The record gives the reactivity of an RNA of 177 nucleotides to 2A3 and DMS. High DMS reactivity at an A or C suggests that its Watson-Crick edge is free.
RNA sequence: GGGAACGACUCGAGUAGAGUCGAAAAGGGGAGUGAAAUAGUACCUGAAACCGUGCGCUUACAAUCCGUCAGAGCCUGCGCCACUUUGGUGGGUGGGUGAUGGCGUGCCUUUUGAAGAAUGAGCCUGACGCUUAACUCAGUUCGCUGAGUUAAGCGUAAAAGAAACAACAACAACAAC
Reactivity to 2A3 in 0.01 (KOAc 150mM, MgCl2 10mM, bicine 150mM(pH8.5), 24C), signal-to-noise 2, nucleotides 027 to 126: g010g000g000g000a100g020u050g180a000a050a000u060a050g060u070a090c000c000u000g010a070a010a000c000c010g100u130g000c080g010c000u020u030a020c040a150a210u020c020c020g000u020c030a000g030a000g040c000c000u020g000c010g300c010c020a030c040u100u120u200g280g000u000g010g000g000u010g000g000g000u070g040a110u030g000g000c000g000u060g010c000c010u180u160u010u120g040a100a060g000a060a160u060g000a020g040c000c010u000g030
Reactivity to DMS in 0.01 (KOAc 150mM, MgCl2 10mM, bicine 150mM(pH8.5), 24C), signal-to-noise 2, nucleotides 027 to 126: g060g020g000g010a160g010u020g010a000a180a250u000a200g010u000a120c010c030u030g000a040a050a080c120c060g030u010g020c200g010c040u010u030a060c130a030a050u020c110c020g000u030c020a060g010a300g000c020c000u020g010c010g020c030c000a030c060u000u020u020g010g000u000g000g010g040u000g000g010g020u010g000a130u000g000g000c050g000u010g000c080c060u000u010u010u020g030a110a010g010a050a100u060g000a080g000c040c010u020g010
DMS adducts were read by reverse transcription with MarathonRT. The RNA was probed in 150 mM KOAc, 10 mM MgCl2 and 150 mM bicine (pH 8.5) at 24 C. The 2A3 profile rests on 896 reads.